[RMDB]
RNA sequence: GGGAACGACUCGAGUAGAGUCGAAAAUAAUCGCCAAUACCAAGAGCGAUUCCCAGUCCUUCGCCCUCGCUGCCUAAUAAGCAGUGAGUGAGGGACCCUUAAUGGGUGUCAGCCCGGGAGUGUUCCCGACCCGGACCCUGGCAUAAUCUAGGGGACUGGAAUAGUCUACGUUCGCGUAGACUAUUCCAAAAGAAACAACAACAACAAC
Reactivity to 2A3 in 0.01 (KOAc 150mM, MgCl2 10mM, bicine 150mM(pH8.5), 24C), signal-to-noise 1, nucleotides 027 to 156: u130a010a010u000c030g010c020c010a020a100u120a180c080c040a110a030g060a040g050c000g010a020u020u000c010c000c010a000g020u010c000c000u000u000c020g090c020c070c060u040c000g000c000u000g000c020c000u100a170a110u300a130a000g020c020a000g010u010g000a010g000u010g000a010g020g010g040a010c010c010c000u100u230a240a140u200g090g010g000u000g000u000c010a000g040c000c000c000g000g000g000a020g020u120g020u010u010c000c000c000g000a000c000c000c000g010g030a010c060c010c000u030g000g000c020a040u130a210a090u300c110u130a010g000g000g000g000a000c040u000

Source information:
This 207-nucleotide RNA was probed chemically with 2A3. It was measured as part of the RMDB library RSTRND.